Chemical mapping of a 177-nucleotide RNA with 2A3 and DMS. DMS adducts were read by reverse transcription with MarathonRT.

RNA sequence: GGGAACGACUCGAGUAGAGUCGAAAAUACGGCUAUAAUGCUAAUAUCGCGGCAUCGGCUACGUAGCCGGCCGUAUAUAAUGCCGCGUAGCCGUACGAUAUCGUAAUGCAUUAGCCGAUAUAUAUCGCUCAGCUUAAAGUUUCGACUUUAAGCUGAGAAAAGAAACAACAACAACAAC
Reactivity to 2A3 in 0.01 (KOAc 150mM, MgCl2 10mM, bicine 150mM(pH8.5), 24C), signal-to-noise 3, nucleotides 027 to 126: u080a000c000g000g000c010u040a020u050a270a050u040g000c010u020a050a030u040a030u080c030g010c030g150g020c110a090u070c020g000g000c020u040a010c080g090u100a060g130c060c010g010g010c010c000g000u020a010u010a000u010a000a100u130g000c010c000g000c000g000u000a010g040c020c010g000u020a030c020g030a030u050a030u100c120g060u100a140a080u130g010c010a000u030u000a000g000c000c000g000a000u000a000u000a000u000a010u090c040g000
Reactivity to DMS in 0.01 (KOAc 150mM, MgCl2 10mM, bicine 150mM(pH8.5), 24C), signal-to-noise 5, nucleotides 027 to 126: u000a050c000g000g000c000u020a090u010a070a060u000g000c000u000a140a070u000a020u000c040g010c140g000g010c160a120u010c000g010g010c010u000a040c100g010u000a100g020c120c120g010g020c050c120g020u000a020u010a050u010a070a080u000g020c000c010g010c060g010u000a010g010c020c010g030u000a040c040g000a060u000a030u000c140g000u010a060a090u010g000c030a010u000u000a040g000c010c010g010a090u000a050u000a060u000a090u020c120g000